[RMDB]
RNA sequence: GGGAACGACUCGAGUAGAGUCGAAAAGAAUCAGCCAAAUCAAACACAGGCUUUUCUGAAGCUUCCAAGUUUUAAUGGAAACUCACGCUCUUCAGAAUGUUGCUGCCUAAUUACAAUUCAUGCCUUUUGCAGACACAUUACAGAGUGGACCAAAAGAGUCGCAAAAUACUUUCGAGUAUUUUGCGACAAAAGAAACAACAACAACAAC
Reactivity to 2A3 in 0.01 (KOAc 150mM, MgCl2 10mM, bicine 150mM(pH8.5), 24C), signal-to-noise 2, nucleotides 027 to 156: g010a000a020u140c100a000g040c030c000a130a120a120u190c090a170a190a070c160a030c060a070g000g000c000u020u060u010u000c070u100g060a040a030g000c060u020u010c020c010a080a060g030u080u050u170u200a120a090u070g000g000a060a050a040c020u050c060a060c030g000c000u010c000u130u130c050a000g040a030a020u010g100u080u160g060c010u000g040c010c000u060a070a060u200u140a110c120a070a090u150u300c100a080u220g060c030c050u060u220u150u140g000c010a000g070a030c000a010c000a010u000u080a000c020a030g010a030g040u020g010g000a010c000c060a110a000a000a080g270a020
This 207-nucleotide RNA was probed chemically with 2A3. It was measured as part of the RMDB library OK3TST.